[RMDB]
Chemical mapping of a 177-nucleotide RNA with 2A3 and DMS. For 2A3 the reverse transcriptase was SuperScript II with manganese. It was measured as part of the RMDB library OK1LIB. For 2A3, 2,881 sequencing reads were counted.

RNA sequence: GGGAACGACUCGAGUAGAGUCGAAAAGAAAGAAAGCUGGAAAGUACGAAAGUACGAAACAGCGAAAGAUUAAAAGAAAAAGAAAAGUGAUCCUAAAGAGGGAGAAGUAGGAUCGUCCUCAAAGAAAGGCUUAUGAUUAGUUCGCUAAUCAUAAGCCAAAAGAAACAACAACAACAAC
Reactivity to 2A3 in 0.01 (KOAc 150mM, MgCl2 10mM, bicine 150mM(pH8.5), 24C), signal-to-noise 4, nucleotides 027 to 126: g090a040a060a020g090a020a050a020g010c020u010g010g070a240a130a050g020u000a000c020g050a130a080a030g000u010a010c000g010a040a100a000c010a000g010c000g010a030a000a000g060a030u140u250a060a000a080a010g240a020a030a030a010a000g180a020a110a000a010g090u110g010a030u030c040c040u190a130a160a050g130a060g020g090g010a070g010a140a060g080u080a000g050g000a020u020c010g020u000c000c020u080c040a030a070a060g100a080a090a020
Reactivity to DMS in 0.01 (KOAc 150mM, MgCl2 10mM, bicine 150mM(pH8.5), 24C), signal-to-noise 4, nucleotides 027 to 126: g000a170a110a050g000a120a060a180g000c010u000g000g010a050a120a300g000u010a010c000g000a140a060a150g010u000a010c000g010a130a090a140c020a000g010c010g000a080a130a090g000a170u030u030a060a080a060a080g020a040a070a070a080a080g010a070a080a050a100g020u000g000a000u000c010c020u000a040a010a070g000a040g000g010g000a080g010a040a120g040u000a010g010g000a000u010c040g010u000c010c040u000c060a090a030a110g010a080a140a070